Chemical mapping of a 207-nucleotide RNA with DMS and 2A3.
RNA sequence: GGGAACGACUCGAGUAGAGUCGAAAAGUAUAGCAUGACUGGCAAUGCGUAUACGAUGAAUCAGCCAGUAAAGAAUCCGUUGUGCGAAAGCACUUCGGUAAUGCAUAAUCGGUUCGAGUACAGCCCGCUACGAGAACCGUUGUUAGUACGGGCGAGAAUGGUAUAGGUGGUUCGCCACCUAUACCAUAAAAGAAACAACAACAACAAC
Reactivity to DMS in 0.01 (KOAc 150mM, MgCl2 10mM, bicine 150mM(pH8.5), 24C), signal-to-noise 3, nucleotides 027 to 156: g000u000a060u000a070g000c020a020u010g010a100c000u010g020g000c040a180a050u010g010c060g050u000a110u000a100c070g020a190u010g020a120a110u010c060a220g020c000c000a050g010u000a040a110a160g010a230a170u000c000c020g040u000u010g000u000g020c000g020a180a100a250g030c000a020c010u000u010c010g010g000u000a020a030u010g040c070a210u010a040a130u000c020g040g030u000u000c000g000a300g020u000a040c030a090g010c010c020c000g000c200u000a030c020g010a300g020a040a020c000c010g000u010u000g000u000u000a110g010u000a090c070g020g000g060c050g010a120g000a080
Reactivity to 2A3 in 0.01 (KOAc 150mM, MgCl2 10mM, bicine 150mM(pH8.5), 24C), signal-to-noise 2, nucleotides 027 to 156: g080u080a020u080a130g020c000a010u000g050a080c000u010g000g020c030a040a070u050g000c050g050u110a050u060a120c110g090a100u170g090a050a100u150c040a070g030c000c000a020g020u090a060a070a000g090a010a040u050c010c010g030u020u000g000u000g000c000g020a050a000a050g000c000a000c000u010u000c000g020g000u010a070a020u060g010c030a070u150a210a100u250c090g010g000u010u000c000g000a020g010u020a030c020a010g020c030c000c010g000c050u030a000c000g030a010g020a060a010c010c010g000u000u030g010u000u000a070g000u050a030c060g000g070g010c010g000a080g150a110